[RMDB]
The record gives the reactivity of an RNA of 207 nucleotides to DMS and 2A3. Values cover nucleotides 27 to 156.
RNA sequence: GGGAACGACUCGAGUAGAGUCGAAAAUAAUAUAGCACAAUCAAUGUAAGUUAUAAUGGGCUCUUCAUUCAGAUCGCCGAUUUUCAACUCAAUCCCAUGUGAGAUCUCAUGAAUGGCAUUUAUGAUUCUCUUGAAUGCUUCUAUUUUGACAUUAGUACAUAGCUGGUUUUUUCGAAAACCAGCUAUGAAAAGAAACAACAACAACAAC
Reactivity to DMS in 0.01 (KOAc 150mM, MgCl2 10mM, bicine 150mM(pH8.5), 24C), signal-to-noise 2, nucleotides 027 to 156: u000a060a130u020a100u000a090g030c180a040c060a060a150u000c010a100a080u010g020u010a050a070g050u010u010a060u000a080a100u010g050g020g040c030u000c110u000u000c020a080u000u000c030a050g000a070u000c040g010c090c060g020a090u000u000u010u010c060a010a070c130u000c040a110a130u010c040c040c010a160u000g010u020g000a160g010a050u000c020u000c020a010u000g010a060a030u000g010g000c030a300u000u000u010a040u000g000a090u010u000c030u000c050u000u020g010a040a080u010g010c000u000u000c070u000a070u010u000u010u010g020a090c070a100u010u000a080g010u010a100
Reactivity to 2A3 in 0.01 (KOAc 150mM, MgCl2 10mM, bicine 150mM(pH8.5), 24C), signal-to-noise 3, nucleotides 027 to 156: u100a020a020u140a010u110a030g000c010a010c030a090a120u100c010a030a080u120g050u090a100a020g010u040u110a040u030a080a050u070g050g060g000c000u000c000u040u010c000a100u080u040c010a010g070a080u030c030g040c070c000g020a020u050u030u080u100c060a080a050c000u010c060a000a100u030c020c040c020a020u110g030u060g060a050g010a030u020c020u020c070a020u050g030a040a010u030g050g000c020a010u000u030u050a050u030g050a090u090u020c050u020c000u070u080g070a070a030u050g030c000u040u050c030u080a120u080u140u100u100g030a030c030a040u110u210a010g080u300a040